[RMDB]
RNA sequence: GGGAACGACUCGAGUAGAGUCGAAAAUCACUUAUGCAUUUGGGUAAGCUACAUUUGAGGCGAGGCUCAGUUCGUAUGUGGACUUGCUCUUCUACUCAGGCUGAUCUUCUCCGAUUCCGGUCAUGGGUACUAUGGGACGCUUCGGCGUCCCAUAGUAAAAAGAAACAACAACAACAAC
Reactivity to 2A3 in 0.01 (KOAc 150mM, MgCl2 10mM, bicine 150mM(pH8.5), 24C), signal-to-noise 3, nucleotides 027 to 126: u060c000a010c040u050u100a050u120g080c050a140u040u060u100g080g000g000u020a010a050g010c030u020a050c100a300u070u090u200g120a100g020g030c030g010a040g000g210c030u000c050a050g030u060u080c020g000u060a020u140g020u120g030g050a110c050u010u040g000c030u030c000u080u040c000u010a070c010u010c040a010g020g000c030u020g020a050u000c010u080u030c040u020c020c030g090a090u130u030c040c010g000g060u070c080a190u080g090g000g000
Reactivity to DMS in 0.01 (KOAc 150mM, MgCl2 10mM, bicine 150mM(pH8.5), 24C), signal-to-noise 2, nucleotides 027 to 126: u000c030a050c060u000u000a050u000g010c030a200u000u030u000g040g000g000u030a090a250g050c000u000a020c130a110u030u020u040g000a090g020g030c020g000a110g020g050c000u020c020a100g010u000u000c100g020u020a000u020g070u000g050g000a070c080u010u000g020c060u020c010u000u000c000u000a170c020u010c070a020g000g010c000u000g000a080u020c050u000u030c010u000c010c070g010a100u030u050c040c050g010g000u000c050a090u030g000g000g000
Source information: The record gives the reactivity of an RNA of 177 nucleotides to 2A3 and DMS. DMS adducts were read by reverse transcription with MarathonRT. It was measured as part of the RMDB library OK1LIB. The 2A3 profile rests on 1,362 reads. For 2A3 the reverse transcriptase was SuperScript II with manganese.